[RMDB]
RNA sequence: GGGAACGACUCGAGUAGAGUCGAAAAGAUAUGGAGAACGGGAGCUAACUCUACACAGGCGUUUGACGAGCUCGGAAACGAGCUCCGAGCCUGUUAGUAGAGUUAGCGACGAUCGUUCUCCUAAGUCCAGUAUCAAAAUGUUCGCAUUUUGAUACUGAAAAGAAACAACAACAACAAC
Reactivity to DMS in 0.01 (KOAc 150mM, MgCl2 10mM, bicine 150mM(pH8.5), 24C), signal-to-noise 5, nucleotides 027 to 126: g010a110u000a300u010g010g000a020g010a020a000c000g000g000g010a050g030c000u000a000a000c000u000c000u000a000c000a100c020a020g010g020c000g020u010u010u020g020a250c300g010a010g020c000u000c000g000g010a090a100a240c000g010a010g010c000u000c000c010g000a100g000c000c000u000g010u000u000a020g020u000a010g000a030g010u000u000a000g000c000g000a030c250g010a040u020c000g000u000u000c000u010c000c010u000a020a090g000u000c050
Reactivity to 2A3 in 0.01 (KOAc 150mM, MgCl2 10mM, bicine 150mM(pH8.5), 24C), signal-to-noise 3, nucleotides 027 to 126: g040a030u140a040u280g000g010a000g000a010a020c000g000g000g000a010g000c010u000a000a010c010u040c010u010a000c020a000c000a010g030g020c100g160u300u300u300g080a090c040g000a000g010c000u020c010g020g040a130a160a040c000g000a000g000c000u000c010c000g000a000g000c000c000u010g010u040u040a020g010u010a000g000a010g000u000u010a000g030c000g000a000c010g000a000u000c000g010u010u000c000u030c010c000u010a100a000g010u000c010
An RNA of 177 nucleotides, treated with DMS and 2A3 and read out base by base.
For 2A3, 6,838 sequencing reads were counted.
Source: RMDB library TTRINS, as collected in RNAgym.
Values are in units of 0.01, from 0 to 300, in steps of 10.
For DMS, 6,782 sequencing reads were counted.
Conditions: 150 mM KOAc, 10 mM MgCl2 and 150 mM bicine (pH 8.5), 24 C.
2A3 adducts were read by reverse transcription with SuperScript II with manganese.